Chemical mapping of a 177-nucleotide RNA with DMS and 2A3. Values cover nucleotides 27 to 126.

[RMDB]
RNA sequence: GGGAACGACUCGAGUAGAGUCGAAAAGCUAUCAACUAUCUGAUGCAAUUUGCACACAAGGUAUCGGGGAAAUACCGUGGUGUGGCAAAGCUUGAAGGAAAUACUAAGGCAAAGGUACUGCAAGUGCGAUGGAGGAUGGAUUCGUCCAUCCUCCAUCAAAAGAAACAACAACAACAAC
Reactivity to DMS in 0.01 (KOAc 150mM, MgCl2 10mM, bicine 150mM(pH8.5), 24C), signal-to-noise 3, nucleotides 027 to 126: g010c050u010a080u010c070a080a100c150u020a100u010c040u010g020a130u000g020c070a150a100u010u000u010g020c000a020c020a010c010a240a060g010g010u010a010u000c050g010g000g010g000a150a120a050u010a000c000c010g000u010g020g010u000g030u000g000g000c010a010a010a040g010c050u010u020g010a110a100g000g000a040a090a070u010a040c120u000a070a070g010g000c060a040a050a060g000g020u020a060c070u000g000c070a060a080g030u000g000c210
Reactivity to 2A3 in 0.01 (KOAc 150mM, MgCl2 10mM, bicine 150mM(pH8.5), 24C), signal-to-noise 3, nucleotides 027 to 126: g020c040u060a020u160c030a020a110c020u130a080u130c030u070g040a050u070g000c030a110a230u020u030u090g000c010a010c000a000c010a080a060g010g000u010a020u150c140g030g010g030g080a060a050a020u010a000c000c000g060u090g080g090u020g020u020g010g070c000a000a000a010g050c030u050u080g090a070a010g090g030a010a120a000u160a040c050u040a030a070g050g000c020a100a020a000g050g010u040a050c050u050g010c020a060a060g060u010g090c070